RNA sequence: GGGAACGACUCGAGUAGAGUCGAAAAGCCGUUCUCGCGUCUCGAUGAUGGUCGUAUCUAUCAACGUCCGUUUGGCGGUCAGUCGAAAAACUUCGGCGGCGAGCAGGCGGCACGCACUGCGGCAGCAGCGCCGAUUAGUGUUCGCACUAAUCGGCGCAAAAGAAACAACAACAACAAC
Reactivity to 2A3 in 0.01 (KOAc 150mM, MgCl2 10mM, bicine 150mM(pH8.5), 24C), signal-to-noise 1, nucleotides 027 to 126: g020c020c010g010u080u040c070u020c070g000c000g070u020c040u020c060g050a130u090g010a000u030g040g040u040c070g050u090a080u080c100u000a090u070c040a080a030c040g080u020c010c000g000u000u120u070g060g030c030g000g020u020c050a090g000u010c010g090a060a020a020a100a170c130u000u010c000g030g000c000g020g010c010g000a030g000c010a000g030g010c000g010g000c050a000c030g030c000a030c020u050g000c000g050g070c020a030g080c020a010
Reactivity to DMS in 0.01 (KOAc 150mM, MgCl2 10mM, bicine 150mM(pH8.5), 24C), signal-to-noise 1, nucleotides 027 to 126: g020c050c000g030u000u000c040u010c020g030c070g010u000c060u010c080g020a140u000g000a060u010g030g020u000c200g020u010a060u030c040u000a060u000c080a080a130c040g010u000c020c020g000u000u000u010g020g000c030g000g010u000c010a060g010u010c000g000a010a030a100a080a160c260u000u000c020g090g030c030g010g000c010g000a050g010c060a030g000g000c000g000g010c160a060c070g000c020a070c040u000g000c010g000g010c040a130g030c120a070